[RMDB]
RNA sequence: GGGAACGACUCGAGUAGAGUCGAAAAAAAAGAUAUGGACAGCAGGGAGCUCUGGUAUGGAGGUAGAUCGGAAACGAUCUACUCCCCACCCAUACAUGGAGCGAGGAUCUGCUGUCCUAAGUCAAAAGGUAACUAAAAACUUCGGUUUUUAGUUACCAAAAGAAACAACAACAACAAC
Reactivity to DMS in 0.01 (KOAc 150mM, MgCl2 10mM, bicine 150mM(pH8.5), 24C), signal-to-noise 2, nucleotides 027 to 126: a070a040a080a110g000a030u000a300u000g010g000a020c000a040g000c000a010g000g000g000a020g060c010u000c010u000g020g020u000a020u000g000g010a080g020g010u010a000g000a030u000c000g000g000a140a050a230c010g030a000u000c000u000a020c000u000c090c000c030c010a300c110c000c000a020u000a020c000a140u010g020g020a010g010c010g010a020g010g000a000u000c010u000g010c000u000g000u010c000c000u000a010a060g010u000c020a040a030a140a090
This 177-nucleotide RNA was probed chemically with DMS. The RNA was probed in 150 mM KOAc, 10 mM MgCl2 and 150 mM bicine (pH 8.5) at 24 C. The DMS profile rests on 1,457 reads. It was measured as part of the RMDB library TTRDES. For DMS the reverse transcriptase was MarathonRT. Values cover nucleotides 27 to 126.